Source: RMDB library OK1LIB, as collected in RNAgym. Chemical mapping of a 177-nucleotide RNA with DMS and 2A3. The reactions ran in a buffer of 150 mM KOAc, 10 mM MgCl2 and 150 mM bicine (pH 8.5), at 24 C.

RNA sequence: GGGAACGACUCGAGUAGAGUCGAAAAUCACACUAUUUACGGCACUUGUCAUUGACAGCAUUAUUCAACAGACGCCUCAUGGUGAGGGGUAUACAUUAAACAUCCCUUACAUUAUCGCGCUCAUUCCUAUAUCUGGGAAUUUCGAUUCCCAGAUAUAAAAAGAAACAACAACAACAAC
Reactivity to DMS in 0.01 (KOAc 150mM, MgCl2 10mM, bicine 150mM(pH8.5), 24C), signal-to-noise 6, nucleotides 027 to 126: u020c090a090c070a130c070u030a080u010u000u030a110c070g000g010c020a060c070u010u010g010u000c030a100u010u010g010a070c070a080g010c080a050u020u000a080u010u010c070a070a070c110a040g010a110c070g010c010c030u000c060a070u020g010g020u010g000a020g000g000g000g020u020a040u020a080c240a120u070u060a050a070a120c130a040u000c000c000c000u000u000a050c010a110u010u010a080u010c100g030c010g000c050u000c040a110u000u010c010c010
Reactivity to 2A3 in 0.01 (KOAc 150mM, MgCl2 10mM, bicine 150mM(pH8.5), 24C), signal-to-noise 9, nucleotides 027 to 126: u070c010a030c020a010c080u110a130u150u150u190a080c050g020g010c020a030c090u060u080g030u060c040a120u010u130g050a050c020a020g040c030a040u040u110a080u150u180c040a060a060c020a070g100a040c050g040c010c010u040c030a060u110g110g000u050g030a020g010g000g000g020u020a060u060a080c120a080u120u260a080a100a030c050a040u040c000c000c000u010u010a020c010a020u070u110a060u100c030g000c010g000c040u020c030a050u040u020c000c000